[RMDB]
RNA sequence: GGGAACGACUCGAGUAGAGUCGAAAACUCUUACCUUCAUAGUUGAUACAACCAUUGCUGUCCUCAUGCCCUGCCACCAGCAUCUCUACUUCUUCCUCUGUCAUCUUCUCACCUGCAGGGGGAAAGAAAGCAUUUUUGGAAUUGGGUGACAAGUGAGCAUGUAGGGAAGCUUCGGCUUCCCUACAUGAAAAGAAACAACAACAACAAC
Reactivity to 2A3 in 0.01 (KOAc 150mM, MgCl2 10mM, bicine 150mM(pH8.5), 24C), signal-to-noise 1, nucleotides 027 to 156: c000u020c000u010u070a020c030c000u060u070c030a050u150a090g050u060u050g150a090u100a150c050a080a010c050c010a100u070u120g000c070u040g080u010c000c030u050c060a060u120g040c000c000c020u000g040c040c000a030c030c030a000g010c010a070u000c090u030c050u090a010c030u030u060c000u050u050c010c090u140c010u000g030u040c010a120u050c030u110u050c050u020c020a050c010c000u050g000c020a000g010g000g020g000g000a040a000a040g030a000a020a000g060c070a050u030u120u030u050u170g100g040a200a200u020u060g080g000g000u030g000a040c080a070a000g070u010g070a030g060